Chemical mapping of a 170-nucleotide RNA with DMS and 2A3. The RNA was probed in 150 mM KOAc, 10 mM MgCl2 and 150 mM bicine (pH 8.5) at 24 C. Reactivities are given for positions 27 through 129. Reactivities are rounded to 0.1 and cut off at 0 and 3. For DMS the reverse transcriptase was MarathonRT.
RNA sequence: GGGAACGACUCGAGUAGAGUCGAAAACACGGGGGUCCCAGUGGAUCCGUGGGAUGCUCCUCCCGAUUCCGAUAUCCCUUCCCCCGAGAGGUCCCCCAGGAAUGGCGGGACCCCACUCUACAGGGUCAGAGACGGUGGUUCGCCACCGUCAAAAGAAACAACAACAACAAC
Reactivity to DMS in 0.01 (KOAc 150mM, MgCl2 10mM, bicine 150mM(pH8.5), 24C), signal-to-noise 4, nucleotides 027 to 129: c070a110c050g010g030g080g010g020u040c040c040c070a000g000u050g050g050a050u050c000c000g040u030g020g010g030a100u100g020c070u050c070c020u000c040c030c030g020a000u030u030c040c040g020a160u050a000u040c010c000c020u010u020c020c030c000c000c030g020a040g020a160g000g030u020c010c010c020c010c000a060g010g000a130a110u030g080g000c150g020g030g040a010c000c000c000c000a060c040u030c000u000a050c060a090g010g040g010u020c080a150g040a090
Reactivity to 2A3 in 0.01 (KOAc 150mM, MgCl2 10mM, bicine 150mM(pH8.5), 24C), signal-to-noise 5, nucleotides 027 to 129: c130a030c010g000g000g000g020g020u080c030c020c020a030g050u160g050g030a020u020c040c040g040u120g020g000g000a020u110g090c040u060c010c000u010c020c000c020g050a040u110u060c020c010g050a040u030a090u140c020c000c000u010u030c020c000c020c000c000g010a040g010a020g010g010u000c020c000c000c000c000a010g090g190a120a090u070g030g000c090g030g020g000a010c000c000c000c000a010c000u000c020u000a020c010a030g020g000g020u020c030a020g020a010